[RMDB]
RNA sequence: GGGAACGACUCGAGUAGAGUCGAAAACGGUGAUAAACCCGGUGCAGAGGCAAACUUGGGGGACGCCGCAUGGAGGGCCCUGUAGACGUCAUUCACCGGGAGAGGUCCCUCCGGCGGAGUGACGUGCAGCAUCCGUAUGGUUCGCCAUACGGAUGCUAAAAGAAACAACAACAACAAC
Reactivity to DMS in 0.01 (KOAc 150mM, MgCl2 10mM, bicine 150mM(pH8.5), 24C), signal-to-noise 1, nucleotides 027 to 126: c030g000g000u000g010a130u000a150a090a160c100c040c030g050g020u000g020c030a280g000a110g000g010c100a060a110a050c000u000u000g030g040g000g000g040a040c090g020c040c030g070c030a020u020g000g030a030g010g000g010c070c000c000u000g010u030a170g000a060c040g000u000c090a130u050u010c040a160c000c100g030g000g000a000g000a020g000g030u000c000c000c000u040c000c000g000g000c000g020g000a030g000u000g010a050c000g110u000g010c150
Reactivity to 2A3 in 0.01 (KOAc 150mM, MgCl2 10mM, bicine 150mM(pH8.5), 24C), signal-to-noise 2, nucleotides 027 to 126: c000g020g040u070g010a080u060a100a090a000c020c000c000g000g000u090g040c010a020g050a070g050g010c020a010a000a210c100u190u200g130g000g000g000g000a010c060g000c070c000g020c030a030u160g010g010a060g000g090g000c020c010c000u030g010u070a040g060a040c040g100u100c000a100u160u190c000a090c090c090g100g020g010a070g010a020g000g000u100c000c000c030u010c000c000g000g030c000g000g000a000g010u090g060a130c100g000u000g040c010